[RMDB]
This 177-nucleotide RNA was probed chemically with 2A3 and DMS. The data come from the RNA Mapping Database (RMDB), libraries RFM100 and RFMREP. DMS (dimethyl sulfate) methylates the pairing face of unpaired adenines and cytosines. The reactions ran in a buffer of 150 mM KOAc, 10 mM MgCl2 and 150 mM bicine (pH 8.5), at 24 C.

RNA sequence: GGGAACGACUCGAGUAGAGUCGAAAAACGUCGACGGUACGCCGUCGACGAAUUCCAGUGAUGAUACCCAAAAGGUUUCGCAUGUAUCCGAUUAAGAUGACGAUAAACCUUGGCUGUCUGAGCGAAAUGUUCAUACGUGAUUCGUCACGUAUGAACAAAAAGAAACAACAACAACAAC
Reactivity to 2A3 in 0.01 (KOAc 150mM, MgCl2 10mM, bicine 150mM(pH8.5), 24C), signal-to-noise 7, nucleotides 027 to 126: a000c000g000u000c000g000a000c010g000g010u050a030c260g050c070c000g000u000c000g000a000c000g000a000a000u020u000c010c000a020g030u020g060a060u030g000a010u040a040c010c020c000a040a110a030a060g040g010u020u020u030c020g010c010a010u050g070u250a090u080c070c090g060a060u100u120a080a070g080a110u090g060a130c020g000a040u070a080a040a030c010c000u010u030g010g000c040u010g010u010c020u040g060a010g020c030g020a040a040a070
Reactivity to DMS in 0.01 (KOAc 150mM, MgCl2 10mM, bicine 150mM(pH8.5), 24C), signal-to-noise 4, nucleotides 027 to 126: a030c000g000u000c000g010a000c000g000g020u010a100c260g050c020c000g010u000c000g000a000c010g000a000a000u000u010c010c010a130g010u010g000a170u000g000a040u010a050c180c020c030a060a080a100a080g010g000u000u000u010c020g010c060a030u010g000u020a050u020c100c070g010a110u010u020a090a100g000a020u010g010a110c030g000a040u030a040a040a030c030c010u010u010g000g010c130u000g010u000c030u000g000a270g040c010g000a060a030a080